[RMDB]
RNA sequence: GGGAACGACUCGAGUAGAGUCGAAAAGAUAUGGACGACGACGAUGCUACCCACCGCAGUCUCUCGGAAACGAGAGCUGCGAGGCAUCAUCAGUCCUAAGUCAAAGGAUGCGCUUCGGCGCAUCCAACCUAAGAAGGCUGUUCGCAGCCUUCUUAGGAAAAGAAACAACAACAACAAC
Reactivity to 2A3 in 0.01 (KOAc 150mM, MgCl2 10mM, bicine 150mM(pH8.5), 24C), signal-to-noise 2, nucleotides 027 to 126: g030a030u140a100u230g020g000a010c030g000a030c120g000a010c070g000a100u010g000c020u120a180c080c070c070a070c030c000g060c010a020g060u100c000u000c000u000c010g000g050a110a090a050c010g010a000g010a010g000c000u000g000c000g000a000g000g010c000a000u010c000a020u000c000a020g020u010c020c000u030a170a040g110u070c070a140a030a120g020g010a010u000g020c010g020c000u100u210c300g190g000c020g000c020a000u000c000c000a010a000
Reactivity to DMS in 0.01 (KOAc 150mM, MgCl2 10mM, bicine 150mM(pH8.5), 24C), signal-to-noise 3, nucleotides 027 to 126: g020a040u000a300u020g010g000a010c010g020a060c300g000a020c040g000a000u000g010c000u010a020c060c040c080a300c140c000g000c000a000g000u010c000u000c000u010c040g020g010a100a040a230c000g000a020g000a010g000c000u000g010c000g000a030g010g010c000a010u010c000a060u000c000a140g000u000c000c000u000a060a110g020u000c030a070a120a190g000g010a010u000g020c020g030c020u010u010c120g040g000c000g000c000a000u000c000c000a020a000